[RMDB]
RNA sequence: GGGAACGACUCGAGUAGAGUCGAAAAAGCCUCGAAGAACGCACCGUCACCUGCGAAGGAAACGUCUACCCAUUCUUCGUCGACGACUACACACGGUGGCGCCUCAUGGAAGGCCUUGACGACGUAGGUGUGGUAGGAGAUUCGUCUCCUACCACACAAAAGAAACAACAACAACAAC
Reactivity to DMS in 0.01 (KOAc 150mM, MgCl2 10mM, bicine 150mM(pH8.5), 24C), signal-to-noise 3, nucleotides 027 to 126: a130g010c050c010u000c050g010a110a100g020a080a110c100g000c040a030c070c020g020u000c070a090c030c020u000g000c100g000a170a070g010g010a100a080a080c090g020u000c020u020a120c060c050c020a170u020u000c030u000u000c040g000u000c090g010a040c080g000a080c070u020a120c060a090c130a050c070g000g020u000g020g010c010g000c110c000u000c100a110u010g000g010a100a040g000g010c030c050u000u030g010a100c020g010a060c050g010u010a120g000
Reactivity to 2A3 in 0.01 (KOAc 150mM, MgCl2 10mM, bicine 150mM(pH8.5), 24C), signal-to-noise 2, nucleotides 027 to 126: a000g040c010c020u000c020g070a100a070g000a110a000c030g010c020a010c020c030g010u040c010a050c080c040u040g000c050g000a050a030g030g000a070a120a030c020g050u020c030u050a080c000c000c020a050u090u010c010u020u030c020g020u010c010g080a050c030g020a050c100u130a030c110a020c020a020c070g040g000u020g030g010c010g010c010c010u020c000a150u160g130g000a100a040g030g000c000c020u080u090g020a020c030g000a010c030g060u090a050g180